[RMDB]
RNA sequence: GGGAACGACUCGAGUAGAGUCGAAAAGAUAUGGAUCCCGUACAACUAUGAAGUACGUCGGAAACGACGUAUGGAGUUGACUACGUGGAUCCUAAGUCAAAGCCAUCUCUGUUCGCAGAGAUGGCAACGAAUCCAUUCCGUUCGCGGAAUGGAUUCGAAAAGAAACAACAACAACAAC
Reactivity to DMS in 0.01 (KOAc 150mM, MgCl2 10mM, bicine 150mM(pH8.5), 24C), signal-to-noise 2, nucleotides 027 to 126: g000a080u000a300u000g000g000a010u000c000c000c010g010u000a050c010a020a050c110u030a240u000g010a240a240g010u000a000c010g050u020c000g000g000a050a110a230c000g000a010c010g000u000a020u030g000g000a150g030u010u010g000a200c300u000a010c000g020u020g150g010a010u000c030c000u010a000a140g010u000c040a040a120a110g000c000c000a000u010c000u000c000u000g000u000u050c240g000c000a030g010a010g020a020u000g000g020c000a000a030
Reactivity to 2A3 in 0.01 (KOAc 150mM, MgCl2 10mM, bicine 150mM(pH8.5), 24C), signal-to-noise 2, nucleotides 027 to 126: g040a000u060a030u120g000g010a000u000c000c000c010g000u030a010c020a120a050c030u100a270u300g030a000a000g010u010a010c000g020u000c000g000g000a090a060a050c010g010a000c030g000u010a000u020g000g000a000g020u050u060g080a170c120u020a010c030g190u300g000g000a000u000c000c000u000a050a000g000u010c040a140a090a000g010c030c000a020u000c000u000c000u020g080u070u120c300g030c120a000g000a000g000a010u000g020g040c010a010a010

The record gives the reactivity of an RNA of 177 nucleotides to DMS and 2A3. The 2A3 profile rests on 3,030 reads. For DMS the reverse transcriptase was MarathonRT. It was measured as part of the RMDB library TTRDES. 2A3 adducts were read by reverse transcription with SuperScript II with manganese. Conditions: 150 mM KOAc, 10 mM MgCl2 and 150 mM bicine (pH 8.5), 24 C.